Chemical mapping of a 207-nucleotide RNA with 2A3.
RNA sequence: GGGAACGACUCGAGUAGAGUCGAAAAGGAAUUGGUCAACAUAUGGGGUUGAAAUAAUUGGUUACUUACAUGGAAGAAGUGGAAUUGGAUGUUCACUUUACCAUGAACAUAGAUAUCAAUUCCAUGUCUAUUAAAAAUGUAAAUGUGAGGCUGGGUGAUGGCGUGCCUUAUUCGUAAGGCACGCCAUAAAAGAAACAACAACAACAAC
Reactivity to 2A3 in 0.01 (KOAc 150mM, MgCl2 10mM, bicine 150mM(pH8.5), 24C), signal-to-noise 1, nucleotides 027 to 156: g010g000a000a000u120u120g000g000u300c110a030a010c040a160u090a150u200g000g000g040g030u000u060g030a080a000a000u120a060a040u100u130g110g010u020u060a010c000u010u000a000c060a000u050g030g010a220a000g030a070a110g130u000g010g000a000a000u000u000g010g020a000u180g040u000u000c000a000c010u130u180u040a190c090c020a020u010g000a000a000c000a000u050a050g110a170u260a000u200c000a000a000u110u050c000c000a000u030g000u020c000u000a040u110u180a120a000a080a000a000u120g000u040a020a020a020u130g000u000g000a060g020g000c030u030g020g010g110u020g020

Values cover nucleotides 27 to 156.
The reactions ran in a buffer of 150 mM KOAc, 10 mM MgCl2 and 150 mM bicine (pH 8.5), at 24 C.